[RMDB]
RNA sequence: GGGAACGACUCGAGUAGAGUCGAAAAACAAGGACGCCGUUUGUUCUGCAAAAACCUCAAACCAGCCCUGACAUGCGGAGCCCGUUAUAGCCGCCGACAGACAAGGAGCUGCUGUUCAGUCCGCCGGCCUUUAAUGUGGGUUCGCCCACAUUAAAGGAAAAGAAACAACAACAACAAC
Reactivity to DMS in 0.01 (KOAc 150mM, MgCl2 10mM, bicine 150mM(pH8.5), 24C), signal-to-noise 1, nucleotides 027 to 126: a050c080a140a100g030g000a020c120g010c110c100g010u000u000u020g020u000u000c060u010g020c060a040a080a080a070a090c050c030u000c040a070a070a130c060c060a080g010c070c020c020u000g000a080c100a040u010g030c050g010g000a130g030c050c070c030g010u000u010a060u020a070g010c020c070g000c040c010g010a070c040a000g000a080c080a090a090g010g000a120g010c020u000g000c120u010g000u000u000c050a080g010u010c040c040g010c070c040g000g000

This 177-nucleotide RNA was probed chemically with DMS. Values cover nucleotides 27 to 126. It was measured as part of the RMDB library OK2TRN.